This 177-nucleotide RNA was probed chemically with DMS and 2A3. For DMS the reverse transcriptase was MarathonRT. 2A3 adducts were read by reverse transcription with SuperScript II with manganese.
RNA sequence: GGGAACGACUCGAGUAGAGUCGAAAAGAUAUGGACCUGCAGUAGGAGGUACAUUUCCCUCGGAAACGAGCAAUGUACUACCCACCCUACAAGGUCCUAAGUCAAAAGGGAUCCUUCGGGAUCCCAACGAUUUGAGAAAGUUCGCUUUCUCAAAUCGAAAAGAAACAACAACAACAAC
Reactivity to DMS in 0.01 (KOAc 150mM, MgCl2 10mM, bicine 150mM(pH8.5), 24C), signal-to-noise 3, nucleotides 027 to 126: g010a020u030a300u000g000g000a000c000c010u000g020c210a170g000u020a010g020g000a160g010g020u000a000c020a010u000u000u000c260c300c010u000c030g010g000a080a110a170c010g010a000g050c150a000a010u000g020u000a010c000u000a030c050c050c100a300c110c000c020u010a010c010a160a010g000g010u000c000c000u000a010a060g000u000c040a050a030a180a030g000g000g020a000u000c000c000u000u020c160g020g000g000a010u000c010c010c010a020a040
Reactivity to 2A3 in 0.01 (KOAc 150mM, MgCl2 10mM, bicine 150mM(pH8.5), 24C), signal-to-noise 1, nucleotides 027 to 126: g020a000u080a030u140g010g000a000c000c020u020g060c140a130g030u000a000g000g020a040g030g030u000a010c000a020u030u020u080c050c050c040u000c000g020g040a060a070a080c010g000a010g020c060a030a000u000g000u000a010c000u030a020c020c090c020a060c000c000c000u030a010c030a050a020g010g010u020c000c000u000a040a030g040u000c020a020a090a050a130g010g000g000a000u000c000c000u020u030c180g170g050g000a000u020c000c020c000a000a000